[RMDB]
RNA sequence: GGGAACGACUCGAGUAGAGUCGAAAAGAUAUGGAUAUAGCGAGGUAUAUUCAGCGAAGAACUCGGAAACGAGGGAGCUGAUAUACGCAGCUAUAUCCUAAGUCAAAGCAAGAGUUCGCUCUUGCAACGUCAAUAUUGCGUUCGCGCAAUAUUGACGAAAAGAAACAACAACAACAAC
Reactivity to DMS in 0.01 (KOAc 150mM, MgCl2 10mM, bicine 150mM(pH8.5), 24C), signal-to-noise 2, nucleotides 027 to 126: g000a050u010a300u000g010g000a030u000a010u000a010g000c000g000a300g000g000u000a000u000a000u010u010c000a020g060c010g000a050a140g000a120a190c030u010c000g000g000a160a070a210c000g010a010g080g000g010a130g010c010u010g000a020u000a000u000a010c000g020c010a300g010c010u000a020u000a000u000c000c000u000a000a140g000u000c020a130a140a140g000c000a030a000g010a010g050u010u050c170g000c010u000c000u000u000g000c030a030a030

This 177-nucleotide RNA was probed chemically with DMS. Source: RMDB library TTRDEL, as collected in RNAgym.